[RMDB]
RNA sequence: GGGAACGACUCGAGUAGAGUCGAAAACUUGCAGGACACCGUCAGCGAACUGCAACCGGUGCUGCGUCAGGUCGGCGAUUUGGAGCGUAUCCUUGCGCGUCUGGCGCUGCGCACCGCGCGUCCGCGCUCCACGAUAUAAUUUCGAUUAUAUCGUGGAAAAAGAAACAACAACAACAAC
Reactivity to DMS in 0.01 (KOAc 150mM, MgCl2 10mM, bicine 150mM(pH8.5), 24C), signal-to-noise 9, nucleotides 027 to 126: c110u000u000g000c030a030g010g000a130c080a100c100c070g010u020c130a100g000c070g000a070a130c020u010g020c020a030a120c250c030g000g010u000g020c000u010g000c000g010u000c000a000g010g010u030c040g020g020c010g000a110u030u020u000g010g000a020g000c300g000u060a120u000c010c010u000u010g000c000g010c010g010u000c010u000g000g000c000g010c010u010g010c210g000c020a020c030c010g030c100g010c070g000u020c050c040g010c050g010c090
Reactivity to 2A3 in 0.01 (KOAc 150mM, MgCl2 10mM, bicine 150mM(pH8.5), 24C), signal-to-noise 9, nucleotides 027 to 126: c010u020u060g000c010a020g020g070a070c030a040c090c050g130u140c060a040g030c030g070a080a040c020u070g000c010a020a010c030c010g010g000u010g000c010u010g000c000g010u000c000a010g030g140u120c050g150g090c050g150a300u050u030u100g020g000a030g020c140g100u210a080u050c010c000u020u050g010c020g000c000g010u010c020u010g000g000c000g000c010u030g020c030g000c000a010c010c000g000c010g000c010g040u060c040c040g030c010g020c010